[RMDB]
RNA sequence: GGGAACGACUCGAGUAGAGUCGAAAAUCUGUUUACAAGUAAUCGUUAAGUCCAUCUCUGACUACGGUUGCGGAAACAGAAGUCAGUUGGCGUCAAGUCCGAGAUGGACUAUUGGUAGAACUGAUCACUACUCGUUUGUAUUCGUACAAACGAGUAGAAAAGAAACAACAACAACAAC
Reactivity to DMS in 0.01 (KOAc 150mM, MgCl2 10mM, bicine 150mM(pH8.5), 24C), signal-to-noise 5, nucleotides 027 to 126: u010c020u000g010u010u020u010a080c090a090a070g010u010a070a060u000c070g010u000u000a080a050g010u000c000c060a030u000c060u000c040u000g010a020c010u000a070c070g000g000u000u000g010c040g010g000a050a040a050c060a080g010a110a110g010u000c040a060g010u000u000g010g010c010g000u000c090a090a040g010u000c010c090g000a070g010a060u010g010g010a010c000u010a010u000u000g010g010u000a090g000a050a030c010u000g000a030u000c170a190
Reactivity to 2A3 in 0.01 (KOAc 150mM, MgCl2 10mM, bicine 150mM(pH8.5), 24C), signal-to-noise 3, nucleotides 027 to 126: u040c010u010g070u050u080u100a090c080a120a050g040u050a080a060u060c050g030u060u190a120a010g010u000c010c010a070u040c040u000c030u040g000a000c000u030a050c100g160g170u050u070g000c010g030g070a050a030a000c060a040g100a110a010g070u040c020a010g000u010u040g080g070c020g000u030c060a050a000g000u000c010c030g020a020g020a060u060g000g000a000c000u010a040u010u040g010g010u010a030g010a070a010c020u020g020a020u070c020a010

Structure probing data (DMS and 2A3) for a 177-nucleotide construct.
It was measured as part of the RMDB library OK2TRN.
The reactions ran in a buffer of 150 mM KOAc, 10 mM MgCl2 and 150 mM bicine (pH 8.5), at 24 C.
2A3 adducts were read by reverse transcription with SuperScript II with manganese.
For 2A3, 4,571 sequencing reads were counted.